The data come from the RNA Mapping Database (RMDB), library M2PK50.
Chemical mapping of a 177-nucleotide RNA with DMS and 2A3.
DMS adducts were read by reverse transcription with MarathonRT.
Conditions: 150 mM KOAc, 10 mM MgCl2 and 150 mM bicine (pH 8.5), 24 C.
For DMS, 1,472 sequencing reads were counted.
[RMDB]
RNA sequence: GGGAACGACUCGAGUAGAGUCGAAAACACACCUGGUUCGCCAGGUGUGAAAAAAAAGCUCACCAACCAAAAUAAACAAGAGCAUGGAUGGAAAAUAAAUAAAAACUGUAAUGUUCGCAUUACAGAAUCAAGCAUAAUAGUUCGCUAUUAUGCUUGAAAAAGAAACAACAACAACAAC
Reactivity to DMS in 0.01 (KOAc 150mM, MgCl2 10mM, bicine 150mM(pH8.5), 24C), signal-to-noise 2, nucleotides 027 to 126: c010a010c000a010c000c000u020g000g000u000u010c190g060c000c000a000g000g000u000g020u020g000a010a010a000a050a060a040a080a110g000c020u000c020a120c040c020a040a060c050c030a050a070a140a030u000a060a060a100c130a060a050g000a050g000c060a060u000g010g010a120u000g010g000a060a070a060a110u010a020a050a070u020a040a020a110a080a070c020u000g030u000a020a000u000g000u000u000c190g000c000a020u000u000a020c000a000g000a110a080
Reactivity to 2A3 in 0.01 (KOAc 150mM, MgCl2 10mM, bicine 150mM(pH8.5), 24C), signal-to-noise 1, nucleotides 027 to 126: c000a000c000a000c000c000u000g020g020u040u020c110g040c080c000a000g000g000u030g010u000g000a010a000a010a000a000a010a000a000g030c010u010c020a090c000c030a030a050c030c000a030a040a040a210u210a140a170a060c130a140a050g030a000g070c110a070u040g060g050a010u010g010g040a000a170a020a090u110a020a080a050u150a100a100a050a020a040c010u000g000u000a010a010u000g010u040u090c220g000c060a000u020u000a010c030a010g010a000a030